[RMDB]
RNA sequence: GGGAACGACUCGAGUAGAGUCGAAAAGAUAUGGACACGAACUACUCGUUUGUGAUGACCGCUUUCGGAAACGAAAGCGCAAGCAUACGAGCGUGUCCUAAGUCAGACAAGCUGUUCGCAGCUUGAACAGAAUGACUUUGUUCGCAAAGUCAUUCUGAAAAGAAACAACAACAACAAC
Reactivity to DMS in 0.01 (KOAc 150mM, MgCl2 10mM, bicine 150mM(pH8.5), 24C), signal-to-noise 5, nucleotides 027 to 126: g000a020u000a300u010g000g010a020c010a020c000g010a060a050c090u020a300c010u000c010g000u010u000u010g040u010g020a110u000g000a120c300c000g010c000u010u000u000c000g000g000a090a060a170c000g000a010a010a000g010c000g010c010a050a150g000c000a010u000a020c000g000a010g000c000g010u000g010u000c000c000u000a020a060g010u000c030a130g020a280c000a010a010g010c000u010g000u000u010c210g010c010a020g000c000u000u000g000a110a190
Reactivity to 2A3 in 0.01 (KOAc 150mM, MgCl2 10mM, bicine 150mM(pH8.5), 24C), signal-to-noise 4, nucleotides 027 to 126: g040a000u060a030u180g010g000a010c010a000c030g020a110a040c090u240a060c020u300c020g020u020u040u060g060u040g150a300u140g020a040c010c080g020c000u010u000u010c000g030g000a070a070a070c000g010a000a000a010g000c000g030c010a110a120g020c000a020u030a030c000g000a010g010c000g000u010g030u000c010c000u000a010a000g030u020c020a010g040a170c010a010a000g000c000u020g070u130u180c300g000c130a000g000c000u000u000g010a040a010

The data come from the RNA Mapping Database (RMDB), library TTRDEL. Structure probing data (DMS and 2A3) for a 177-nucleotide construct. Values cover nucleotides 27 to 126. The 2A3 profile rests on 10,016 reads. The reactions ran in a buffer of 150 mM KOAc, 10 mM MgCl2 and 150 mM bicine (pH 8.5), at 24 C.